RNA sequence: GGGAACGACUCGAGUAGAGUCGAAAAUUGUUUGGCUCUUCUCUAGUUAGCUAAACAAUCAAGACUCAGACUAGAGCAUCCCACCAUCAGGGAUAAUCGAUGGUCCCCGUCCUAGGGCUAGAAGGACUAAACCUGUGAAUGAGCGGAAAGUUAAUACCCAUGAUACAUCGUUCGCGAUGUAUCAUGGAAAAGAAACAACAACAACAAC
Reactivity to DMS in 0.01 (KOAc 150mM, MgCl2 10mM, bicine 150mM(pH8.5), 24C), signal-to-noise 1, nucleotides 027 to 156: u000u040g020u000u020u000g030g000c010u010c040u000u000c120u000c180u000a120g000u000u010a100g000c000u000a030a040a050c060a070a050u000c030a100a300g030a040c030u000c010a070g060a080c030u010a040g010a070g010c090a250u020c000c010c000a100c060c010a030u030c010a100g000g020g010a100u000a130a030u010c100g000a040u000g050g030u000c000c000c030c020g000u010c070c040u000a080g050g000g020c140u010a070g060a170a080g010g020a140c050u000a050a130a050c060c020u000g020u010g010a050a160u000g000a090g000c010g000g000a050a070a080g050u000u000a120a110u000a210c070
Reactivity to 2A3 in 0.01 (KOAc 150mM, MgCl2 10mM, bicine 150mM(pH8.5), 24C), signal-to-noise 4, nucleotides 027 to 156: u010u000g000u020u010u000g010g000c030u020c040u210u050c080u080c120u120a080g120u160u150a000g020c010u010a010a010a000c000a000a010u010c030a050a030g010a010c000u000c020a040g070a090c020u030a010g000a000g020c000a030u010c020c000c000a010c000c000a000u030c020a070g230g060g040a150u150a210a040u200c060g010a000u030g000g000u050c000c000c010c010g020u010c010c000u050a050g000g020g010c040u050a020g020a090a100g000g030a010c000u010a040a030a000c000c000u050g070u060g110a090a070u080g030a020g080c030g010g050a090a050a010g030u080u080a040a050u050a140c010
This 207-nucleotide RNA was probed chemically with DMS and 2A3. It was measured as part of the RMDB library ARCHII. Values cover nucleotides 27 to 156. For DMS the reverse transcriptase was MarathonRT.